[RMDB]
RNA sequence: GGGAACGACUCGAGUAGAGUCGAAAAUGUUUCCCAGCCAGGGAUUUUCGUCCUCGAGUUUCUUGAUGGUUCUCCUGCUCUUCCGGAGCCUUCUUUCGAGGUCUUCCGCGUCUUUUCUUGCUUGGAUGUAACUCAGUCUUCGGACUGAGUAAAAGAAACAACAACAACAAC
Reactivity to 2A3 in 0.01 (KOAc 150mM, MgCl2 10mM, bicine 150mM(pH8.5), 24C), signal-to-noise 5, nucleotides 027 to 129: u120g020u010u080u040c000c000c000a010g110c070c040a030g020g000g010a020u030u020u030u060c030g030u040c010c000u000c020g030a030g020u050u080u040c080u110u180g080a090u110g070g020u050u030c030u020c030c020u050g080c020u020c000u180u010c020c010g030g010a030g000c000c000u060u040c010u060u140u060c060g010a040g010g050u010c030u060u010c020c020g020c030g040u020c010u030u100u060u010c000u030u070g060c030u000u030g050g030a070u070g070u120a030
Reactivity to DMS in 0.01 (KOAc 150mM, MgCl2 10mM, bicine 150mM(pH8.5), 24C), signal-to-noise 6, nucleotides 027 to 129: u030g000u010u000u030c010c020c010a130g000c120c110a080g000g000g030a080u000u000u020u020c060g020u030c030c000u000c040g020a110g000u010u020u050c070u030u050g000a100u060g050g000u020u020c020u020c020c010u010g040c060u000c060u030u030c070c100g000g000a090g050c090c060u000u000c060u000u010u000c080g000a060g050g000u040c030u010u000c000c000g040c190g000u030c000u030u050u030u020c070u040u030g020c020u040u000g010g000a110u030g010u000a120